About this RNA:
An RNA of 177 nucleotides, treated with DMS and read out base by base.
[RMDB]
RNA sequence: GGGAACGACUCGAGUAGAGUCGAAAAGCAUCCAACUGGCCUCCGACCGGGCAAAAGUUUUAAUUACCAAGCAACAAGGGGUAGUAGCAGCAGGGACUGGCCAGAUUGUUGAGGAGGAGCAGGAGCAGCGACGUGAUACUUUCGAGUAUCACGUCGCAAAAGAAACAACAACAACAAC
Reactivity to DMS in 0.01 (KOAc 150mM, MgCl2 10mM, bicine 150mM(pH8.5), 24C), signal-to-noise 1, nucleotides 027 to 126: g080c250a170u000c010c000a150a080c000u010g020g000c040c000u000c040c000g000a070c030c120g040g000g000c040a000a030a080a110g000u000u050u080u000a110a070u040u000a160c040c040a050a300g000c100a250a070c110a120a080g000g010g000g020u000a010g020u040a070g080c010a200g020c130a100g040g000g000a100c000u020g000g000c020c000a100g000a150u010u000g060u000u000g020a060g000g000a090g000g040a020g000c090a000g000g000a040g040c080a180
The RNA was probed in 150 mM KOAc, 10 mM MgCl2 and 150 mM bicine (pH 8.5) at 24 C.